[RMDB]
RNA sequence: GGGAACGACUCGAGUAGAGUCGAAAAGAACUCUGUUUCGAAAGGAUUUGCGGUAGAGCACAUAGAAUGGGACCCGAAAGGUUGUGAACUAUGCUUGAGGAAGGCGAAGCCAGGGGAAACUCUGGUGUUACCGUAGUUCAUUCGUGAACUACGGUAAAAAAGAAACAACAACAACAAC
Reactivity to DMS in 0.01 (KOAc 150mM, MgCl2 10mM, bicine 150mM(pH8.5), 24C), signal-to-noise 5, nucleotides 027 to 126: g030a110a140c050u010c060u010g000u010u010u010c020g010a080a100a160g000g010a070u010u010u010g010c040g010g000u000a080g020a060g020c050a080c060a050u010a070g010a070a110u010g010g000g010a080c030c000c010g010a090a090a110g000g000u010u000g020u020g000a050a080c070u000a040u020g000c060u010u020g010a130g000g010a100a060g000g010c050g010a080a120g000c000c000a000g020g000g000g010a140a040a130c010u000c000u000g020g020u000g000
Reactivity to 2A3 in 0.01 (KOAc 150mM, MgCl2 10mM, bicine 150mM(pH8.5), 24C), signal-to-noise 2, nucleotides 027 to 126: g010a030a000c040u010c060u060g000u030u070u040c070g070a090a120a000g060g020a140u010u030u050g110c080g030g020u140a060g030a050g200c030a030c050a040u120a020g090a130a100u040g020g000g010a050c020c010c040g070a040a030a030g060g030u090u000g140u030g020a020a000c120u030a010u140g020c020u000u070g010a010g000g080a100a010g010g010c050g010a030a030g000c010c000a010g090g000g020g000a000a020a020c000u010c000u000g020g000u000g040